[RMDB]
Chemical mapping of a 170-nucleotide RNA with 2A3 and DMS. For DMS the reverse transcriptase was MarathonRT. The reactions ran in a buffer of 150 mM KOAc, 10 mM MgCl2 and 150 mM bicine (pH 8.5), at 24 C. The 2A3 profile rests on 2,658 reads. 2A3 adducts were read by reverse transcription with SuperScript II with manganese.
RNA sequence: GGGAACGACUCGAGUAGAGUCGAAAAACUCGGAGUUGGACGGGAAAAGCACAUCCAGAGGACCCCUUCGACGAACAGAAGGAUCUGGUACCGGGGAGGAAUAGCCCAUAGUACAAGGGGAGAUGCUGAAGUCGCUGGUUCGCCAGCGACAAAAGAAACAACAACAACAAC
Reactivity to 2A3 in 0.01 (KOAc 150mM, MgCl2 10mM, bicine 150mM(pH8.5), 24C), signal-to-noise 1, nucleotides 027 to 129: a000c030u070c020g000g020a000g050u120u060g000g000a000c000g000g010g000a000a000a000a140g150c030a090c010a130u120c000c000a040g000a050g030g060a070c020c040c000c000u000u000c000g100a080c030g000a120a000c000a000g060a050a010g010g010a030u020c000u020g000g000u000a060c000c070g010g000g010g000a050g060g000a040a000u040a020g010c000c000c000a030u040a050g030u000a050c030a110a040g000g000g000g000a040g000a010u100g000c140u020g010a040a040
Reactivity to DMS in 0.01 (KOAc 150mM, MgCl2 10mM, bicine 150mM(pH8.5), 24C), signal-to-noise 4, nucleotides 027 to 129: a120c090u010c050g060g000a070g020u040u020g060g010a050c200g050g010g010a060a080a150a010g040c000a100c120a060u020c090c040a120g000a070g020g020a160c190c040c020c060u020u020c040g050a080c140g030a060a060c210a080g010a050a040g050g020a060u040c020u060g040g020u000a060c110c110g060g020g070g000a040g020g000a010a020u030a050g020c080c030c010a050u020a110g040u020a050c170a130a080g010g010g070g000a090g030a020u030g020c070u070g040a080a070